The record gives the reactivity of an RNA of 177 nucleotides to DMS. Conditions: 150 mM KOAc, 10 mM MgCl2 and 150 mM bicine (pH 8.5), 24 C. For DMS the reverse transcriptase was MarathonRT.
RNA sequence: GGGAACGACUCGAGUAGAGUCGAAAAGAUAUGGAGAUGAAGAGACAUGGCGGAUUCGCGAUAAGUCGGUGUCGGAAACGACAUGCGACUUUUGACGCGAAUCCGCCAUGUCUCCAUCUCCUAAGUCCGAGAUAAUAAACUUCGGUUUAUUAUCUCGAAAAGAAACAACAACAACAAC
Reactivity to DMS in 0.01 (KOAc 150mM, MgCl2 10mM, bicine 150mM(pH8.5), 24C), signal-to-noise 2, nucleotides 027 to 126: g000a120u000a300u020g010g000a040g010a020u000g010a170a180g010a020g000a010c000a000u000g020g000c000g000g000a030u000u000c000g020c020g030a140u000a040a010g010u000c020g000g000u010g000u000c000g050g000a110a090a280c000g000a010c000a000u000g020c000g010a000c000u010u000u010u000g010a240c180g030c030g000a020a000u000c000c000g000c000c000a000u000g000u000c000u000c000c000a000u000c000u000c000c000u000a010a070g010u010c070